[RMDB]
RNA sequence: GGGAACGACUCGAGUAGAGUCGAAAACUACACCGAACUUGCACGGUGGGUCUUAUGACCUGAUCGUCAUUGACGAACUGUGGAACAUUUCAGCAGCUGUGGUUGAUGAAGCGUUACGCCCUAGUCACAGCUGUCCAGUGUUCGCACUGGACAGCUGAAAAGAAACAACAACAACAAC
Reactivity to DMS in 0.01 (KOAc 150mM, MgCl2 10mM, bicine 150mM(pH8.5), 24C), signal-to-noise 2, nucleotides 027 to 126: c040u000a120c050a090c030c040g010a050a090c170u010u000g000c100a140c000g010g050u000g000g000g010u010c000u000u000a120u020g000a050c000c060u010g010a020u000c190g010u000c020a030u010u010g000a140c050g010a110a060c110u000g010u000g010g020a070a010c090a040u000u000u000c150a150g020c020a040g000c000u040g030u020g030g000u000u020g000a070u000g010a100a130g000c010g000u000u000a100c110g010c030c040c040u010a060g000u000c030a050
Reactivity to 2A3 in 0.01 (KOAc 150mM, MgCl2 10mM, bicine 150mM(pH8.5), 24C), signal-to-noise 2, nucleotides 027 to 126: c030u100a040c010a040c040c000g050a040a100c040u120u240g090c110a000c030g000g000u000g020g000g000u000c000u090u300a150u260g010a020c000c020u010g110a060u020c000g020u010c010a140u010u210g060a050c000g030a070a070c060u020g020u060g000g050a050a020c030a060u040u100u110c070a050g000c020a000g000c040u000g050u120g120g050u080u010g030a120u140g020a060a030g000c080g050u100u050a060c110g020c010c000c020u050a040g010u030c010a010
Description
Conditions: 150 mM KOAc, 10 mM MgCl2 and 150 mM bicine (pH 8.5), 24 C. An RNA of 177 nucleotides, treated with DMS and 2A3 and read out base by base. For 2A3 the reverse transcriptase was SuperScript II with manganese.